An RNA of 177 nucleotides, treated with DMS and 2A3 and read out base by base. Values are in units of 0.01, from 0 to 300, in steps of 10. For DMS the reverse transcriptase was MarathonRT. Conditions: 150 mM KOAc, 10 mM MgCl2 and 150 mM bicine (pH 8.5), 24 C.

[RMDB]
RNA sequence: GGGAACGACUCGAGUAGAGUCGAAAACUGGGAAAUCUGGUCUGCGAGAAAUGUCACUUCCAUCUCCCGAUCUACACACCGGAAGUGCUGACGCUAUGCCCGAAAUGUGGUCAUGACCAGUUCCAGACAACCCAGAAGCAUUCGUGCUUCUGGGUUGAAAAGAAACAACAACAACAAC
Reactivity to DMS in 0.01 (KOAc 150mM, MgCl2 10mM, bicine 150mM(pH8.5), 24C), signal-to-noise 2, nucleotides 027 to 126: c020u010g010g000g000a000a130a050u000c010u000g020g020u000c000u000g030c070g000a100g010a110a140a110u010g000u030c020a030c020u000u000c010c010a140u000c150u000c030c010c000g000a100u000c120u010a060c080a060c080a090c260c160g000g020a020a030g050u000g000c020u000g010a160c030g010c040u010a060u000g030c060c000c020g000a070a110a200u000g010u010g030g000u000c040a090u020g010a030c020c000a030g000u000u000c000c000a010g000a220
Reactivity to 2A3 in 0.01 (KOAc 150mM, MgCl2 10mM, bicine 150mM(pH8.5), 24C), signal-to-noise 2, nucleotides 027 to 126: c000u020g010g000g060a010a150a140u060c020u000g000g030u000c010u000g000c050g020a090g170a170a160a100u210g060u200c010a000c000u000u030c000c000a100u100c040u050c100c030c010g030a110u000c080u190a090c140a020c010a010c120c050g000g000a000a000g000u000g000c000u040g030a000c000g020c030u050a040u200g040c010c020c020g120a280a300a070u300g120u270g020g030u130c040a060u150g000a000c000c000a040g010u040u030c010c000a000g000a030